[RMDB]
RNA sequence: GGGAACGACUCGAGUAGAGUCGAAAAAGGAGUCUCUGACUAGAUGCCUCUUCUUCCUGAUAGGAACGUGUCUGCUAACAUUGCUUGCUGUGUGUGCCUUCCUUUCUCAGAGGUCCUUGUUGAAUUUACUUAGCAGUCAAGAGGAAGAUUUUAAUAGCGUAACGAGAGGAUUCGUCCUCUCGUUACGAAAAGAAACAACAACAACAAC
Reactivity to 2A3 in 0.01 (KOAc 150mM, MgCl2 10mM, bicine 150mM(pH8.5), 24C), signal-to-noise 2, nucleotides 027 to 156: a000g080g000a020g010u020c010u000c000u060g050a040c050u090a040g030a110u050g000c010c030u000c020u060u000c000u000u000c030c000u060g120a150u090a160g060g060a110a000c150g060u140g040u110c000u040g030c040u050a080a040c000a140u020u200g040c050u060u090g010c010u000g000u070g090u000g010u020g110c040c000u040u080c010c000u120u130u020c050u000c020a040g030a020g010g020u030c000c000u060u040g030u040u070g020a030a110u030u100u100a120c080u010u060a000g000c040a000g080u060c020a030a040g030a000g070g020a000a000g120a050u090u120u130u170a180a210u200a040g030
Reactivity to DMS in 0.01 (KOAc 150mM, MgCl2 10mM, bicine 150mM(pH8.5), 24C), signal-to-noise 1, nucleotides 027 to 156: a050g000g000a070g000u010c000u000c040u020g010a210c060u010a100g000a090u000g030c030c010u000c020u000u020c040u000u020c000c010u020g030a140u000a060g010g010a040a030c070g040u000g000u000c010u000g040c010u010a070a160c090a090u000u000g000c040u000u000g020c020u000g020u000g020u000g040u000g000c030c020u000u010c030c000u000u000u000c050u010c030a080g010a110g020g020u000c040c010u000u000g020u000u000g020a100a130u010u000u000a060c080u000u000a100g060c040a070g000u000c070a040a120g020a060g000g010a090a020g000a150u000u000u020u030a040a180u010a160g010

Conditions: 150 mM KOAc, 10 mM MgCl2 and 150 mM bicine (pH 8.5), 24 C. An RNA of 207 nucleotides, treated with 2A3 and DMS and read out base by base. For DMS the reverse transcriptase was MarathonRT. For 2A3, 630 sequencing reads were counted.